[RMDB]
RNA sequence: GGGAACGACUCGAGUAGAGUCGAAAAGUAUAAAUAGGAUGGUGUAACUAGGCUCCCUGCUCCUAGAAGCCCAAGACACACCCAAUGAUAAGAACACACACUGCUAGGUCAUGGUGAUAUGGAAAGACAAUCACUGAGCCAGGAGGCCCAGGUCGCACCGAGUAAAAUGAUUCGUCAUUUUACUCGGAAAAGAAACAACAACAACAAC
Reactivity to 2A3 in 0.01 (KOAc 150mM, MgCl2 10mM, bicine 150mM(pH8.5), 24C), signal-to-noise 3, nucleotides 027 to 156: g020u000a050u020a200a170a060u120a060g030g040a080u110g020g050u040g010u040a060a090c040u010a030g010g000c010u060c030c000c010u040g010c020u030c040c010u010a020g020a050a000g020c010c010c000a020a010g030a010c020a000c000a040c060c050c050a040a090u070g060a040u070a160a050g070a150a000c050a000c010a000c010a030c160u070g030c010u050a030g000g090u040c030a050u130g010g010u040g020a040u060a170u130g070g050a120a090a030g080a100c030a020a060u060c020a030c100u040g010a000g040c010c040a020g040g000a030g040g000c000c010c000a010g000g050u040c010g000c050a020
Reactivity to DMS in 0.01 (KOAc 150mM, MgCl2 10mM, bicine 150mM(pH8.5), 24C), signal-to-noise 1, nucleotides 027 to 156: g000u010a050u000a030a070a130u030a080g010g000a030u000g040g010u000g030u000a090a250c020u000a030g000g020c040u000c020c040c020u000g010c030u000c010c070u000a070g000a110a180g000c000c030c030a060a030g000a080c030a060c050a020c010c010c010a080a110u000g010a100u010a030a160g020a040a090c000a050c070a080c040a120c070u010g020c120u010a120g010g050u010c020a090u010g020g030u000g010a050u000a090u000g020g010a090a100a110g010a060c100a040a040u010c020a030c030u000g000a050g020c060c000a100g040g010a290g030g000c040c020c000a080g010g020u010c090g030c060a140